This 177-nucleotide RNA was probed chemically with 2A3 and DMS. Conditions: 150 mM KOAc, 10 mM MgCl2 and 150 mM bicine (pH 8.5), 24 C. The 2A3 profile rests on 16,629 reads. Source: RMDB library TTRDES, as collected in RNAgym.

RNA sequence: GGGAACGACUCGAGUAGAGUCGAAAAGAUAUGGAGGACAGAACUCAACAGCGAGUGUAUCGGAAACGAUACCUCGACAUGAGUCUGUCCUCCUAAGUCAAAACGUGGACGCUUCGGCGUCCACGAACACGAAUACUAUCUUCGGAUAGUAUUCGUGAAAAGAAACAACAACAACAAC
Reactivity to 2A3 in 0.01 (KOAc 150mM, MgCl2 10mM, bicine 150mM(pH8.5), 24C), signal-to-noise 5, nucleotides 027 to 126: g000a010u000a010u040g000g010a000g010g010a000c010a000g060a300a240c050u040c160a300a260c120a260g020c000g010a020g010u300g010u060a000u010c000g000g000a000a000a010c010g000a000u000a000c010c010u000c000g010a000c000a200u300g000a010g000u000c000u000g000u000c010c000u010c000c000u000a000a000g000u000c010a010a000a020a070c030g000u000g000g010a000c000g010c000u090u090c300g210g000c000g000u030c010c000a000c000g010a000a000
Reactivity to DMS in 0.01 (KOAc 150mM, MgCl2 10mM, bicine 150mM(pH8.5), 24C), signal-to-noise 4, nucleotides 027 to 126: g000a010u000a020u010g000g000a030g000g000a030c000a010g010a070a060c000u000c000a130a090c260a180g020c000g000a020g010u010g010u000a000u000c000g010g000a030a010a040c000g010a020u000a010c000c010u000c000g000a020c080a190u010g000a010g010u000c000u000g010u000c000c000u000c000c000u000a000a040g000u000c000a120a070a110a220c040g020u010g010g010a020c000g000c000u000u010c280g040g000c020g010u000c000c000a000c000g000a030a130